[RMDB]
RNA sequence: GGGAACGACUCGAGUAGAGUCGAAAAAAUAUGAUAAAAGCAGACUCAAUAAAGCAGCAUUCAUCAAAGAUCUUACAAAGUAUGCAAAACCAACAUACAUUGGUGAAGUUAAACCAGAAAUUUUUCAGUACCAGCUAAUAUUCGUAUUAGCUGGUACAAAAGAAACAACAACAACAAC
Reactivity to 2A3 in 0.01 (KOAc 150mM, MgCl2 10mM, bicine 150mM(pH8.5), 24C), signal-to-noise 4, nucleotides 027 to 126: a000a000u300a070u100g040a060u060a090a090a040a020g010c010a020g020a140c010u020c080a050a170u140a250a090a000g000c020a010g000c000a070u050u000c000a010u010c010a010a060a070g050a130u080c010u070u080a040c060a040a100a000g000u010a000u000g060c070a040a000a060a170c000c060a030a020c000a020u080a010c010a090u020u080g050g000u040g060a030a010g070u140u220a050a100a090c080c060a050g180a060a110a030u140u070u000u030u100c020a020
Reactivity to DMS in 0.01 (KOAc 150mM, MgCl2 10mM, bicine 150mM(pH8.5), 24C), signal-to-noise 2, nucleotides 027 to 126: a000a060u050a050u020g000a110u020a000a110a090a150g060c050a070g000a260c020u010c130a120a160u010a040a050a110g010c140a090g000c010a100u020u000c040a020u000c070a040a040a100g010a080u050c030u010u020a080c090a030a020a100g010u030a000u000g040c160a030a040a050a120c130c120a050a030c010a040u010a020c060a050u020u020g000g000u000g020a030a090g000u010u000a010a110a060c060c050a070g000a020a060a160u000u000u000u050u000c050a120

Description:
The record gives the reactivity of an RNA of 177 nucleotides to 2A3 and DMS. The 2A3 profile rests on 2,669 reads. The reactions ran in a buffer of 150 mM KOAc, 10 mM MgCl2 and 150 mM bicine (pH 8.5), at 24 C.